[RMDB]
RNA sequence: GGGAACGACUCGAGUAGAGUCGAAAACACGAAGUCUUCCCGUCCCUUGCCGUGCGCCUUGCAGAAGGCAUCGUUCACCGCCUCGUAACGGAAGUCGCUGCUUAUGAGGGACAUGAAGUCUGCAGAGGCGAGCAAUAUACUUCGGUAUAUUGCUCGCAAAAGAAACAACAACAACAAC
Reactivity to 2A3 in 0.01 (KOAc 150mM, MgCl2 10mM, bicine 150mM(pH8.5), 24C), signal-to-noise 2, nucleotides 027 to 126: c100a000c010g130a070a020g000u000c010u010u020c030c000c000g020u010c000c000c000u040u080g010c030c020g100u050g020c010g000c030c010u020u050g080c030a040g050a280a080g010g000c000a050u100c040g060u070u060c060a090c150c040g040c000c020u020c010g020u040a050a040c080g000g000a070a010g150u170c030g000c070u020g000c010u140u030a110u300g040a020g000g010g020a010c000a010u040g000a000a050g010u010c040u050g020c040a040g000a120g210
Reactivity to DMS in 0.01 (KOAc 150mM, MgCl2 10mM, bicine 150mM(pH8.5), 24C), signal-to-noise 1, nucleotides 027 to 126: c090a280c060g000a050a060g000u000c010u000u000c000c070c030g030u000c010c000c010u000u010g110c110c120g050u000g000c060g000c050c040u000u000g000c040a040g000a090a010g000g000c040a040u000c080g000u010u000c090a090c010c050g000c050c060u000c010g010u000a030a020c100g040g000a100a040g000u030c080g000c000u000g010c100u040u000a050u010g000a020g030g040g000a030c070a090u000g000a060a040g000u000c010u000g030c060a130g010a160g000
The record gives the reactivity of an RNA of 177 nucleotides to 2A3 and DMS. DMS adducts were read by reverse transcription with MarathonRT. The data come from the RNA Mapping Database (RMDB), library OK2TRN. The DMS profile rests on 959 reads. Conditions: 150 mM KOAc, 10 mM MgCl2 and 150 mM bicine (pH 8.5), 24 C.